[RMDB]
RNA sequence: GGGAACGACUCGAGUAGAGUCGAAAACUUACAACACCGGGUUCUAGGAUCCACGCGGACACUCGACGGGCGAUUUUGCGGCGCGGGAUCGCUUGGGGGUUAUAGUCUCAGUGCCCACCACUCAAAAGGGUAAAUUAAUCUUCGGAUUAAUUUACCCAAAAGAAACAACAACAACAAC
Reactivity to DMS in 0.01 (KOAc 150mM, MgCl2 10mM, bicine 150mM(pH8.5), 24C), signal-to-noise 3, nucleotides 027 to 126: c040u010u060a090c120a120a120c080a060c070c040g030g030g000u010u000c020u010a080g030g000a070u000c040c010a100c050g010c080g000g000a090c070a050c030u000c040g010a120c090g030g010g010c060g000a050u010u010u010u000g020c050g000g000c090g000c020g000g000g020a040u020c040g030c020u000u000g000g010g000g000g000u030u000a070u000a080g010u000c030u000c050a030g040u000g000c010c020c020a100c060c050a060c170u000c110a040a070a110a100
Reactivity to 2A3 in 0.01 (KOAc 150mM, MgCl2 10mM, bicine 150mM(pH8.5), 24C), signal-to-noise 2, nucleotides 027 to 126: c030u060u090a020c010a070a010c020a000c010c020g050g010g010u050u010c010u050a010g050g000a020u010c020c010a010c040g030c020g040g020a030c000a020c020u020c020g030a030c030g000g030g000c030g020a020u040u020u040u090g110c030g060g000c020g000c010g000g000g000a020u010c000g000c000u030u000g010g000g000g000g010u000u090a140u000a000g040u000c010u000c000a010g000u010g020c000c000c000a080c040c020a020c010u080c010a000a040a010a050